[RMDB]
RNA sequence: GGGAACGACUCGAGUAGAGUCGAAAACAGGUGUUCGCACCUGACGAUGGGGUCGGAUCGUUUGACGCAUCACCUUCAUCGAUCCUGAAGCCUCCACGGGGGAGAAGAUGAUGCCGAGAUCCGACGGAGGCACCCUGGUUUGGGGGUUCGCCCCCAACCUAAGGCACAUUUUCGAAUGUGCCUUAGGAAAAGAAACAACAACAACAAC
Reactivity to 2A3 in 0.01 (KOAc 150mM, MgCl2 10mM, bicine 150mM(pH8.5), 24C), signal-to-noise 6, nucleotides 027 to 156: c020a010g000g010u030g050u120u150c210g040c110a020c000c000u020g020a040c040g110a100u170g000g010g000g010u000c000g000g010a000u000c010g060u100u180u300g070a050c050g000c010a000u010c000a000c010c000u020u020c040a300u270c130g130a170u100c010c000u020g020a030a010g010c000c000u020c010c010a020c050g020g000g010g030g040a170g000a030a000g010a010u000g000a000u000g010c020c010g090a090g000a080u000c000c000g000a010c010g000g000a000g000g000c000a020c000c000c000u030g090g040u080u080u040g000g000g000g000g010u050u040c100g140c000c000c000c010c010a020a030
Reactivity to DMS in 0.01 (KOAc 150mM, MgCl2 10mM, bicine 150mM(pH8.5), 24C), signal-to-noise 2, nucleotides 027 to 156: c030a030g000g050u000g020u000u010c250g020c020a010c000c010u000g010a070c060g010a110u000g010g000g030g020u000c010g000g000a020u010c010g010u000u000u020g000a130c150g010c020a020u000c010a010c020c000u000u000c010a280u000c130g000a060u000c000c000u010g010a070a130g010c010c000u000c000c020a300c060g010g000g000g040g010a110g000a020a010g010a030u000g000a040u000g020c010c020g030a300g010a010u000c010c000g000a020c040g010g030a050g040g000c010a090c000c000c020u010g010g010u010u000u000g000g010g030g000g000u000u010c090g010c000c000c000c000c000a020a100

Source information
The record gives the reactivity of an RNA of 207 nucleotides to 2A3 and DMS. The RNA was probed in 150 mM KOAc, 10 mM MgCl2 and 150 mM bicine (pH 8.5) at 24 C.